[RMDB]
RNA sequence: GGGAACGACUCGAGUAGAGUCGAAAAGCGCAUCGGCACCGCCGCGAGCGUGUCGGUGUUCGAAGACCUGGGAAUCCAGCAGGCGCCCAACAGCACCGUCUGCUCCUAUCUGAACAAGCUGCUGUGGAGAUAGCCGUCGGUUCGCCGACGGCUAUCUAAAAGAAACAACAACAACAAC
Reactivity to 2A3 in 0.01 (KOAc 150mM, MgCl2 10mM, bicine 150mM(pH8.5), 24C), signal-to-noise 2, nucleotides 027 to 126: g000c000g000c000a000u000c010g010g000c040a020c060c260g060c000c030g230c050g070a200g020c000g000u000g000u020c010g000g000u000g000u000u010c030g070a020a000g050a010c010c020u020g060g000g080a070a120u200c040c030a010g000c010a020g000g000c000g000c000c050c000a020a000c050a010g040c010a030c030c020g000u000c010u030g060c000u020c000c000u080a170u180c070u120g040a080a030c020a120a040g050c080u060g010c030u000g040u090g010g060

This 177-nucleotide RNA was probed chemically with 2A3. The data come from the RNA Mapping Database (RMDB), library OK1LIB. The RNA was probed in 150 mM KOAc, 10 mM MgCl2 and 150 mM bicine (pH 8.5) at 24 C. 2A3 adducts were read by reverse transcription with SuperScript II with manganese.